The record gives the reactivity of an RNA of 177 nucleotides to 2A3 and DMS. Conditions: 150 mM KOAc, 10 mM MgCl2 and 150 mM bicine (pH 8.5), 24 C.

RNA sequence: GGGAACGACUCGAGUAGAGUCGAAAAGAUAUGGACCUAGGCACCUUUUGACGCCUGCACAUCGGAAACGAUGUGUAAAGGCGAUAAGGUGCUAGGUCCUAAGUCAAAAUCUGGGUUCGCCCAGAAACUUAUGUUGGCAGUUCGCUGCCAACAUAAGAAAAGAAACAACAACAACAAC
Reactivity to 2A3 in 0.01 (KOAc 150mM, MgCl2 10mM, bicine 150mM(pH8.5), 24C), signal-to-noise 2, nucleotides 027 to 126: g010a000u070a050u070g000g020a000c010c020u040a040g180g210c020a040c020c040u080u080u120u250g300a230c290g010c000c000u040g000c000a010c000a020u020c000g000g060a020a070a010c010g000a000u000g010u020g000u050a080a020a000g000g000c000g020a040u050a290a030g000g000u030g010c000u000a000g000g020u000c010c000u010a010a000g000u020c010a030a010a020a300u030c010u010g020g000g030u070u100c260g120c020c000c040a010g000a000a010a010
Reactivity to DMS in 0.01 (KOAc 150mM, MgCl2 10mM, bicine 150mM(pH8.5), 24C), signal-to-noise 2, nucleotides 027 to 126: g000a050u000a300u010g000g000a000c010c000u000a040g010g000c020a000c000c000u020u010u000u000g020a250c100g030c000c000u000g000c010a000c000a000u000c000g000g000a090a070a120c000g010a000u000g020u000g020u000a000a130a030g010g020c000g030a040u010a010a000g000g040u000g000c020u000a020g000g000u010c000c010u000a000a050g010u000c010a140a090a140a140u000c000u010g010g000g010u000u010c300g040c040c000c000a020g020a030a070a180